Notes: Chemical mapping of a 207-nucleotide RNA with 2A3 and DMS.
RNA sequence: GGGAACGACUCGAGUAGAGUCGAAAAUAAUCUUGAGCACGAACAAGCAAUACACCGUUUAAGUAAACCUGUUCUUUACCAGGCAAGUAAGACAGCGUUACACCAUUAUCAUCUGGACCCGACUCUGAAGUCUCGCUUCCAGAUGCUGUGUAACGGACAUACAUAUCCCAUUCGUGGGAUAUGUAUGAAAAGAAACAACAACAACAAC
Reactivity to 2A3 in 0.01 (KOAc 150mM, MgCl2 10mM, bicine 150mM(pH8.5), 24C), signal-to-noise 9, nucleotides 027 to 156: u110a010a060u040c030u060u080g040a030g050c080a030c120g070a110a040c060a080a020g060c040a060a090u110a160c060a090c060c070g090u100u120u160a160a110g040u100a060a070a060c010c000u020g030u140u070c020u070u070u040a060c040c020a030g100g000c050a090a030g040u060a030a020g040a040c030a030g050c010g010u000u000a000c010a000c020c030a090u140u140a060u280c010a000u000c000u000g010g010a010c000c010c040g010a010c020u020c140u250g140a140a020g010u000c010u010c060g050c080u030u000c000c000a000g000a000u000g000c020u040g000u000g000u010a010a000c000g010g010a000
Reactivity to DMS in 0.01 (KOAc 150mM, MgCl2 10mM, bicine 150mM(pH8.5), 24C), signal-to-noise 4, nucleotides 027 to 156: u000a090a110u010c040u010u000g000a100g020c020a090c140g000a050a110c030a080a110g010c030a100a120u000a100c050a080c040c040g020u000u010u010a080a120g000u000a070a100a060c030c010u000g020u000u000c060u000u000u000a050c080c010a060g010g020c050a070a110g030u010a070a100g010a100c070a100g010c030g030u000u000a020c020a020c030c150a120u000u000a110u000c010a020u000c020u000g010g020a050c060c020c030g020a030c010u000c060u000g010a130a160g010u000c030u000c020g010c040u000u010c010c010a000g000a020u000g020c070u010g000u000g000u010a010a030c010g000g020a130
The RNA was probed in 150 mM KOAc, 10 mM MgCl2 and 150 mM bicine (pH 8.5) at 24 C.
The data come from the RNA Mapping Database (RMDB), library OK3TST.